Background
Structure probing data (DMS and 2A3) for a 177-nucleotide construct. For 2A3, 727 sequencing reads were counted. High 2A3 reactivity points to a flexible backbone, as in loops and unpaired stretches. For 2A3 the reverse transcriptase was SuperScript II with manganese. Conditions: 150 mM KOAc, 10 mM MgCl2 and 150 mM bicine (pH 8.5), 24 C. For DMS the reverse transcriptase was MarathonRT.
RNA sequence: GGGAACGACUCGAGUAGAGUCGAAAAUGGGAGCCCUCGGGCGCAAGUGAAAUACCACUACUUUUAACGUUAUUUUACUUAUUCCGUGGGUCGGAAGCGGGGCAUCGCCCCUCCUUUUGGCUCUAAGUGACCCUUAAGACUUCGGUCUUAAGGGUCAAAAAGAAACAACAACAACAAC
Reactivity to DMS in 0.01 (KOAc 150mM, MgCl2 10mM, bicine 150mM(pH8.5), 24C), signal-to-noise 2, nucleotides 027 to 126: u030g010g000g000a160g030c010c010c010u010c100g020g010g020c110g060c210a020a010g010u000g020a000a050a000u000a010c070c050a130c080u030a140c300u010u000u010u040a080a160c160g000u000u000a010u000u000u000u000a000c000u000u000a180u040u010c020c010g000u000g000g020g010u000c020g000g000a000a030g020c300g010g050g010g010c000a100u010c210g000c020c010c020c030u000c080c000u000u000u000u000g000g040c010u000c010u020a000a140g020
Reactivity to 2A3 in 0.01 (KOAc 150mM, MgCl2 10mM, bicine 150mM(pH8.5), 24C), signal-to-noise 2, nucleotides 027 to 126: u070g030g000g060a030g000c030c040c050u010c050g010g000g000c040g050c140a000a000g010u000g040a000a000a000u030a000c020c030a010c090u210a150c040u070u200u200u280a180a000c110g010u040u000a010u000u020u000u000a000c000u000u100a090u110u100c010c000g070u050g000g000g000u010c010g000g010a040a000g060c030g000g000g040g000c010a070u230c170g080c000c000c000c000u020c000c020u000u010u030u010g000g050c000u000c000u030a000a250g070
Values are in units of 0.01, from 0 to 300, in steps of 10.